[RMDB]
RNA sequence: GGGAACGACUCGAGUAGAGUCGAAAAGAUAUGGACAUUCCGUUAGACAUGAUCUAAGGAUCGGAAACGAUCCGAAGAUCAACAGCUAACGGAGAUGUCCUAAGUCAAAGCGCACUUCGGUGCGCAACGAAGACACUACGUUCGCGUAGUGUCUUCGAAAAGAAACAACAACAACAAC
Reactivity to DMS in 0.01 (KOAc 150mM, MgCl2 10mM, bicine 150mM(pH8.5), 24C), signal-to-noise 3, nucleotides 027 to 126: g010a080u010a300u000g000g000a010c000a030u000u000c000c000g030u000u000a000g010a040c120a290u000g000a000u000c000u010a070a300g010g000a010u000c000g000g000a060a160a250c010g020a000u000c000c000g000a230a020g000a000u010c000a050a040c300a260g030c000u000a000a010c000g000g000a020g000a010u000g000u000c020c010u010a000a030g000u000c050a080a070a120g020c000g000c000a020c010u000u020c210g020g000u000g010c000g030c000a000a050
Reactivity to 2A3 in 0.01 (KOAc 150mM, MgCl2 10mM, bicine 150mM(pH8.5), 24C), signal-to-noise 2, nucleotides 027 to 126: g060a000u110a070u160g000g010a010c010a010u030u000c010c000g010u020u010a030g010a060c070a190u130g000a000u000c010u010a070a010g010g000a000u000c000g000g050a080a100a050c020g000a010u000c000c010g020a010a000g000a000u010c000a000a010c030a010g040c000u000a000a000c000g000g000a010g000a010u000g010u000c000c000u020a110a010g020u020c060a120a080a090g020c000g000c010a000c030u070u150c300g070g000u000g020c000g000c010a000a000